Chemical mapping of a 177-nucleotide RNA with DMS and 2A3.
Source: RMDB library M2PK90, as collected in RNAgym.
High 2A3 reactivity points to a flexible backbone, as in loops and unpaired stretches.

[RMDB]
RNA sequence: GGGAACGACUCGAGUAGAGUCGAAAAAGCAACGAGUGUGUGUGGGACGUUUUAUCCCAAGCUCUGAGUAGAGCACGCGCUCACACACACCCCGAGCGAGCAUCAGCAGAGCGCAAACGCUGGUAAAUUCCUUCAGAUCUUUCGAGAUCUGAAGGAAAAAAGAAACAACAACAACAAC
Reactivity to DMS in 0.01 (KOAc 150mM, MgCl2 10mM, bicine 150mM(pH8.5), 24C), signal-to-noise 4, nucleotides 027 to 126: a130g000c040a040a300c300g000a070g000u000g010u000g010u000g020u000g010g000g010a090c020g020u000u010u010u000a140u010c040c050c020a080a130g010c010u000c000u000g010a130g010u010a050g000a000g020c000a090c110g010c080g010c000u000c000a000c000a020c000a010c010a020c010c010c010c010g000a300g000c020g010a090g000c070a030u010c020a040g010c040a080g000a120g000c080g020c130a060a080a100c130g020c030u000g000g000u000a050a050a160
Reactivity to 2A3 in 0.01 (KOAc 150mM, MgCl2 10mM, bicine 150mM(pH8.5), 24C), signal-to-noise 1, nucleotides 027 to 126: a000g030c030a000a020c020g000a020g010u000g000u000g000u000g000u000g000g000g000a020c020g010u060u050u200u190a110u120c000c030c040a020a010g000c000u000c020u060g270a200g140u300a000g140a000g010c010a000c040g050c020g000c010u000c010a000c000a000c010a010c000a010c000c020c010c000g020a020g030c000g010a020g000c030a030u060c040a000g020c000a000g010a030g170c130g030c050a110a060a010c070g040c000u000g000g060u020a090a070a040